Background: The data come from the RNA Mapping Database (RMDB), library RFM100. This 177-nucleotide RNA was probed chemically with 2A3.

[RMDB]
RNA sequence: GGGAACGACUCGAGUAGAGUCGAAAAGAGGGGAAAAGGAAAGCGAGAAAGAAACAUCGAAUAACGUCCUCAUACUAAGUUUGCUUGUAUUUUGUAGCAUAUUUGGAUUCUGCGUUUUCGAAACAUGGGAUCCGAAGACGUUCGCGUCUUCGGAUCCAAAAGAAACAACAACAACAAC
Reactivity to 2A3 in 0.01 (KOAc 150mM, MgCl2 10mM, bicine 150mM(pH8.5), 24C), signal-to-noise 1, nucleotides 027 to 126: g250a000g000g000g180g000a100a300a000a000g150g070a190a150a000g000c070g000a120g170a000a120a000g000a070a070a000c070a000u000c050g000a000a000u120a180a000c000g000u020c000c000u250c100a000u000a000c000u050a030a030g120u000u070u000g000c000u000u000g000u200a150u200u030u290u030g260u180a000g150c000a000u000a120u120u050u000g270g000a100u000u140c000u030g100c000g000u000u000u000u000c000g000a040a010a040c030a030u180g000
The 2A3 profile rests on 261 reads. Reactivities are given for positions 27 through 126. Values are in units of 0.01, from 0 to 300, in steps of 10.